[RMDB]
RNA sequence: GGGAACGACUCGAGUAGAGUCGAAAACGUGCGUACUGGGCCGCCGGCACAAUGUUCUACCCAGCCGUCUCAGAGGUCGCGGUUCGACUACGAUCAGCCAGCCGGUCAGCGGGGUCCUCCUAGCUAGGACCUAGUGGUAUUUCGAUACCACUAGGUCAAAAGAAACAACAACAACAAC
Reactivity to 2A3 in 0.01 (KOAc 150mM, MgCl2 10mM, bicine 150mM(pH8.5), 24C), signal-to-noise 2, nucleotides 027 to 126: c020g020u040g040c020g070u100a070c010u070g040g020g000c020c060g030c010c030g070g020c050a030c000a030a150u150g020u130u090c050u090a130c020c010c010a010g040c020c000g050u030c050u020c050a070g040a080g110g060u110c020g000c030g010g000u020u070c020g030a000c040u120a060c060g110a100u030c010a000g020c010c010a040g010c080c010g000g000u050c040a010g060c040g050g000g020g000u040c010c020u000c000c010u040a090g000c040u040a090g020
Reactivity to DMS in 0.01 (KOAc 150mM, MgCl2 10mM, bicine 150mM(pH8.5), 24C), signal-to-noise 2, nucleotides 027 to 126: c110g000u010g010c080g020u000a070c050u000g000g000g010c080c070g010c020c000g010g000c000a090c120a080a080u000g000u000u000c090u000a130c070c020c010a140g000c040c030g000u010c030u000c050a090g000a140g030g010u000c060g000c060g010g000u000u010c090g020a050c040u000a080c120g000a090u000c060a110g010c050c100a070g010c050c030g020g000u010c050a080g020c040g010g000g000g000u000c020c030u000c010c030u010a040g020c080u020a130g020